[RMDB]
RNA sequence: GGGAACGACUCGAGUAGAGUCGAAAAAGCUACGGCUUACGAGCCGUAGCAAACCAGCUCUGUUGGGACAAGAGGACGGUCUUCUUUUGGAAGGAAGACCAUCAUCUUGUCCGAAGAGAGCUGGUAAAAUGCGAUACGUAUUCGUACGUAUCGCAUUAAAAGAAACAACAACAACAAC
Reactivity to 2A3 in 0.01 (KOAc 150mM, MgCl2 10mM, bicine 150mM(pH8.5), 24C), signal-to-noise 7, nucleotides 027 to 126: a000g010c000u000a000c000g000g020c010u070u050a070c290g080a020g010c000c000g000u000a000g000c000a000a000a000c000c000a000g010c000u000c000u000g240u060u010g070g010g000a000c000a000a000g000a010g020g010a000c010g000g000u010c000u010u020c010u040u100u130u240g270g130a130a040g020g000a000a000g000a000c000c000a000u000c000a000u000c000u000u000g010u000c000c000g000a000a000g050a000g000a000g000c000u000g000g010u010a010a020
Reactivity to DMS in 0.01 (KOAc 150mM, MgCl2 10mM, bicine 150mM(pH8.5), 24C), signal-to-noise 1, nucleotides 027 to 126: a040g000c010u000a000c010g000g000c010u010u020a070c220g010a050g010c000c000g010u000a010g000c000a000a040a010c000c000a000g000c010u000c000u000g000u000u000g000g000g000a030c010a000a010g000a040g000g020a010c110g010g000u000c000u000u010c000u010u000u010u070g010g040a140a060g000g000a000a010g000a010c000c000a010u000c000a020u000c000u010u000g000u000c000c000g010a000a010g000a000g000a010g010c000u000g000g000u000a000a020
Chemical mapping of a 177-nucleotide RNA with 2A3 and DMS.
For 2A3 the reverse transcriptase was SuperScript II with manganese.
For DMS, 8,847 sequencing reads were counted.